[RMDB]
RNA sequence: GGGAACGACUCGAGUAGAGUCGAAAAUUAUGAGUGCAAUAGAAAGGGUGUGAUUCCAAAGAUUUAAACUCUUGCAGUACAUCCUAUUAGCGACCAGACAAAUGGAUUGGAUCUCACCACUCAUGGAAUUAGCUUGAAAGUUCGCUUUCAAGCUAAUAAAAGAAACAACAACAACAAC
Reactivity to 2A3 in 0.01 (KOAc 150mM, MgCl2 10mM, bicine 150mM(pH8.5), 24C), signal-to-noise 4, nucleotides 027 to 126: u150u070a010u050g000a010g030u030g000c040a070a070u060a220g130a130a130a010g030g010g010u000g000u030g050a050u120u060c040c030a070a050a020g030a000u070u190u200a100a080a050c020u020c000u020u040g020c020a010g060u020a010c000a010u010c000c020u030a080u110u090a060g040c020g020a020c010c010a010g060a130c060a060a280a070u130g060g060a070u030u040g060g010a120u000c010u000c020a010c030c020a000c010u010c000a010u010g000g010a130
Reactivity to DMS in 0.01 (KOAc 150mM, MgCl2 10mM, bicine 150mM(pH8.5), 24C), signal-to-noise 5, nucleotides 027 to 126: u000u010a030u000g000a010g000u000g000c080a080a130u000a110g010a100a130a060g000g000g020u000g000u000g010a060u000u010c160c040a110a040a060g020a040u000u000u020a080a110a130c300u000c010u000u000g000c120a090g010u000a020c030a030u000c010c020u000a130u000u000a110g020c140g010a050c030c020a040g000a050c140a100a090a120u010g000g010a150u000u000g010g010a110u000c010u000c060a130c280c010a030c030u010c010a030u000g010g000a110